[RMDB]
RNA sequence: GGGAACGACUCGAGUAGAGUCGAAAAGAUAUGGAUUCGCCAUGUCAGCAACAGCUAAACUCGGAAACGAGUUUAGACAUGCUGGCAUGCGAAUCCUAAGUCAAACACUCAGGUUCGCCUGAGUGAAGACAAUAUGAGUCUUCGGACUCAUAUUGUCAAAAGAAACAACAACAACAAC
Reactivity to DMS in 0.01 (KOAc 150mM, MgCl2 10mM, bicine 150mM(pH8.5), 24C), signal-to-noise 5, nucleotides 027 to 126: g010a050u000a300u010g000g020a010u000u000c000g010c160c120a000u000g020u010c000a010g020c010a050a110c300a200g000c020u000a000a000a000c000u000c000g010g000a100a110a260c010g010a020g010u000u000u010a020g000a030c120a200u000g000c010u000g010g000c000a000u000g010c020g020a010a000u000c000c000u000a020a100g010u000c040a160a180a230c010a000c000u010c000a010g000g020u000u000c250g020c000c000u010g010a010g010u000g000a060a140
Reactivity to 2A3 in 0.01 (KOAc 150mM, MgCl2 10mM, bicine 150mM(pH8.5), 24C), signal-to-noise 2, nucleotides 027 to 126: g040a000u080a040u150g010g000a010u020u020c030g120c230c070a000u020g000u000c000a000g000c010a010a180c040a220g040c000u010a010a010a000c010u010c010g040g000a060a100a060c010g010a000g000u000u000u000a000g010a070c010a010u070g000c000u000g010g010c000a010u000g000c000g010a010a000u000c010c000u000a030a000g020u000c000a030a060a080c010a000c010u000c010a000g040g080u070u090c270g100c100c000u000g010a000g000u000g000a030a010

Record summary
Chemical mapping of a 177-nucleotide RNA with DMS and 2A3. Conditions: 150 mM KOAc, 10 mM MgCl2 and 150 mM bicine (pH 8.5), 24 C. High 2A3 reactivity points to a flexible backbone, as in loops and unpaired stretches. The DMS profile rests on 5,473 reads. The data come from the RNA Mapping Database (RMDB), library TTRDES.